[RMDB]
RNA sequence: GGGAACGACUCGAGUAGAGUCGAAAACAGCAUACUUCUUUCUCAAUAUUAGUACAGCUAAACAUGUAGGAAUAUAUUGAAUAAAUCUAGAUACAACACUUAUUUGAGAUAAUGUUGUGAAUGAACCACCCAUGCACGCUUUCGAGCGUGCAUGGGUAAAAGAAACAACAACAACAAC
Reactivity to 2A3 in 0.01 (KOAc 150mM, MgCl2 10mM, bicine 150mM(pH8.5), 24C), signal-to-noise 2, nucleotides 027 to 126: c000a000g060c030a000u020a020c040u130u080c000u060u260u070c000u000c000a000a060u070a030u180u000a050g000u030a150c100a060g040c100u120a120a090a060c100a180u200g010u100a020g000g210a190a010u060a000u030a030u050u100g080a010a100u070a020a070a050u000c000u050a000g010a120u060a190c030a140a000c000a100c060u080u090a050u040u100u050g090a030g000a010u000a180a150u000g000u090u000g030u000g050a030a140u100g010a000a030c000c010
The record gives the reactivity of an RNA of 177 nucleotides to 2A3. For 2A3, 530 sequencing reads were counted. The data come from the RNA Mapping Database (RMDB), library OK1LIB. The RNA was probed in 150 mM KOAc, 10 mM MgCl2 and 150 mM bicine (pH 8.5) at 24 C. 2A3 adducts were read by reverse transcription with SuperScript II with manganese.